[RMDB]
RNA sequence: GGGAACGACUCGAGUAGAGUCGAAAACCUCGUAAAACCUGUGACAACCAAGCUAGUUGCGAACGACUCCAACUACGCCCUCGCCGCCUAAAUCCCGGUGAGCGUCCAUCCUUUCAGUGCCGAUACUGGUUGGAAUGGGCGUCGACUCUUAUCGGAUCUCCUUAAACCAGUUCGCUGGUUUAAGGAGAAAAGAAACAACAACAACAAC
Reactivity to 2A3 in 0.01 (KOAc 150mM, MgCl2 10mM, bicine 150mM(pH8.5), 24C), signal-to-noise 3, nucleotides 027 to 156: c020c000u050c070g090u090a020a030a080a190c030c020u090g070u090g090a050c060a090a050c030c050a070a010g000c010u040a030g030u060u050g070c130g110a080a060c110g090a100c100u000c030c000a020a020c030u050a030c090g010c030c010c000u020c010g000c000c000g030c000c000u110a110a080a050u080c010c030c020g000g030u030g020a030g000c000g000u020c000c000a000u000c000c000u010u040u020c000a020g000u000g060c040c040g010a020u040a150c000u010g000g060u000u040g000g000a110a090u000g000g010g000c000g020u000c000g010a030c000u050c030u120u070a060u050c000g000g000a000u000
This 207-nucleotide RNA was probed chemically with 2A3. High 2A3 reactivity points to a flexible backbone, as in loops and unpaired stretches. For 2A3, 1,581 sequencing reads were counted. The reactions ran in a buffer of 150 mM KOAc, 10 mM MgCl2 and 150 mM bicine (pH 8.5), at 24 C. The data come from the RNA Mapping Database (RMDB), library RSTRND. Reactivities are given for positions 27 through 156.